[RMDB]
RNA sequence: GGGAACGACUCGAGUAGAGUCGAAAAUAACCUGCCCUAGGCUUUGGGAUAACCCUCGGAAACGGGGGCUAAUACCGGAUAUUCAUUCUCGGCGGCAUCGUUGGGGGUGGAAAGUUUUUCGGCAUGGAAUUUAAUUAUUAUUCGUAGUAAUUAAAUUAAAAGAAACAACAACAACAAC
Reactivity to DMS in 0.01 (KOAc 150mM, MgCl2 10mM, bicine 150mM(pH8.5), 24C), signal-to-noise 2, nucleotides 027 to 126: u020a140a170c000c040u010g000c000c000c110u000a040g010g000c010u000u000u010g000g000g000a040u000a120a280c000c000c000u000c000g000g010a070a120a170c020g000g010g000g000g020c020u020a110a090u030a040c000c010g000g020a110u020a030u010u010c000a020u000u000c020u000c020g000g020c000g000g000c300a270u170c060g130u000u070g010g000g000g000g050u030g000g000a000a000a000g000u000u000u000u000u000c030g000g000c000a000u000g000g000
Reactivity to 2A3 in 0.01 (KOAc 150mM, MgCl2 10mM, bicine 150mM(pH8.5), 24C), signal-to-noise 2, nucleotides 027 to 126: u110a030a050c010c000u020g020c010c000c000u000a030g030g000c020u050u100u180g010g000g000a010u060a050a030c000c000c000u000c010g010g000a040a040a050c010g010g000g000g000g000c000u020a020a000u120a070c000c000g070g060a160u090a080u160u070c010a010u020u040c000u000c000g000g020c000g000g260c200a250u300c110g040u050u000g000g010g000g000g000u000g000g010a020a020a010g010u020u010u000u010u040c010g000g010c000a000u030g000g010
Structure probing data (DMS and 2A3) for a 177-nucleotide construct.
For 2A3 the reverse transcriptase was SuperScript II with manganese.
The DMS profile rests on 1,831 reads.